[RMDB]
RNA sequence: GGGAACGACUCGAGUAGAGUCGAAAAGGGAAGGACUUGGUGACAACUGAGUGGUAGCUUUGGUUCGUGAGCUCUGGGAUGAGAGCUGAGUGUCCCAAGAAACAUUCCGAAGUUCCAGCCUCCUCGUCACCCCUCACAGACAGCAUGACCAGGCUGAUAAAAUUAGCAUAUUCGUAUGCUAAUUUUAAAAAGAAACAACAACAACAAC
Reactivity to DMS in 0.01 (KOAc 150mM, MgCl2 10mM, bicine 150mM(pH8.5), 24C), signal-to-noise 5, nucleotides 027 to 156: g020g000g020a090a080g030g000a090c060u000u000g020g030u010g020a080c080a070a210c060u000g010a070g040u000g010g020u010a080g020c030u000u000u000g020g010u010u000c060g000u010g000a070g000c030u010c040u000g030g030g010a130u010g010a130g000a140g030c070u000g010a120g030u000g010u000c020c010c020a080a080g010a140a100a060c020a080u000u000c000c020g000a060a160g000u000u000c010c010a110g000c020c010u000c030c020u000c030g010u010c040a120c040c010c050c030u000c040a080c080a140g010a150c030a080g000c030a150u000g010a110c050c040a070g020g020c010u000g010a270
Reactivity to 2A3 in 0.01 (KOAc 150mM, MgCl2 10mM, bicine 150mM(pH8.5), 24C), signal-to-noise 7, nucleotides 027 to 156: g060g010g040a050a050g040g010a090c060u130u110g010g040u090g040a030c020a090a050c120u080g020a030g060u050g020g060u100a050g030c030u040u050u040g020g010u050u080c070g030u070g090a050g030c010u000c040u070g040g060g030a070u150g050a060g020a030g100c100u080g060a070g060u110g020u040c000c000c000a010a010g020a010a050a000c010a020u070u000c010c010g000a020a000g020u050u010c020c000a020g040c010c010u010c010c000u020c020g040u030c040a070c010c010c010c000u030c000a080c000a020g130a060c010a010g030c010a030u090g040a080c070c040a050g060g000c010u000g020a030